[RMDB]
RNA sequence: GGGAACGACUCGAGUAGAGUCGAAAACCAGGGAUUUUCGUCCUCGAGUUUCUUGAUGGUUCUCCUGCUCUUCCGGAGCCUUCUUUCGAGGUCUUCCGCGUCUUUUCUUGCUUGGAUCCAUUUCUCGUAGACCUGAGGUUCGCCUCAGGUAAAAGAAACAACAACAACAAC
Reactivity to DMS in 0.01 (KOAc 150mM, MgCl2 10mM, bicine 150mM(pH8.5), 24C), signal-to-noise 9, nucleotides 027 to 129: c020c010a180g000g000g000a050u080u010u020u000c090g020u020c010c010u000c020g030a090g030u020u020u010c020u050u040g030a090u030g010g000u020u020c060u000c050c020u000g000c050u010c060u010u060c090c040g040g020a090g000c060c010u000u050c050u010u040u020c080g050a040g000g000u020c020u000u000c030c020g000c130g020u050c040u020u030u020u010c060u040u060g000c010u010u040g050g000a080u010c060c050a140u050u020u000c010u020c030g040u060a100g010
Reactivity to 2A3 in 0.01 (KOAc 150mM, MgCl2 10mM, bicine 150mM(pH8.5), 24C), signal-to-noise 9, nucleotides 027 to 129: c010c000a030g030g030g010a030u050u050u060u090c060g030u040c000c000u020c010g030a030g010u050u090u040c070u060u110g070a090u080g040g010u070u030c030u020c040c010u040g040c010u030c010u180u030c040c020g010g010a020g000c010c000u060u050c010u060u190u100c080g020a020g020g040u010c040u050u010c010c010g040c050g080u040c040u030u130u040u020c050u060u090g050c020u020u060g020g010a030u030c010c010a060u050u050u020c050u000c020g070u050a050g060

Chemical mapping of a 170-nucleotide RNA with DMS and 2A3.
For DMS the reverse transcriptase was MarathonRT.
Conditions: 150 mM KOAc, 10 mM MgCl2 and 150 mM bicine (pH 8.5), 24 C.
Source: RMDB library 15KLIB, as collected in RNAgym.